RNA sequence: GGGAACGACUCGAGUAGAGUCGAAAAUCUGUUUAUAGGGAUCAAAUCUAUAAACUUUGUGUGUGUGAAAUUGAAACUCCGGCUUAGCACACUUUCCGGUUCGGUUUAUGAUUUGUUCUACAACUACGAUGUUCUCUAGUUUCGACUGGAGAGUAUCAAAAGAAACAACAACAACAAC
Reactivity to 2A3 in 0.01 (KOAc 150mM, MgCl2 10mM, bicine 150mM(pH8.5), 24C), signal-to-noise 5, nucleotides 027 to 126: u020c000u000g060u010u110u050a230u140a140g000g050g030a020u030c020a010a030a010u030c080u170a020u020a010a000a000c000u020u130u070g060u010g000u000g000u000g010u020g100a150a160a250u160u140g060a180a070a030c060u030c020c000g020g000c020u040u090a010g000c000a000c000a010c000u060u150u050c000c000g030g030u050u100c030g020g010u000u020u020a010u020g010a010u000u010u030g010u010u010c010u040a110c020a090a040c010u080a030c080
Reactivity to DMS in 0.01 (KOAc 150mM, MgCl2 10mM, bicine 150mM(pH8.5), 24C), signal-to-noise 5, nucleotides 027 to 126: u020c030u010g000u010u000u000a050u030a130g010g010g000a030u020c050a020a030a030u010c000u030a000u000a010a010a010c010u010u010u020g010u000g010u000g010u000g020u000g000a070a110a150u050u030g010a100a110a100c160u010c010c020g000g000c070u000u010a190g000c010a010c030a020c010u010u010u010c010c000g010g010u010u010c070g010g010u000u000u000a030u000g000a020u000u000u000g000u010u000c010u000a080c090a070a130c100u040a080c230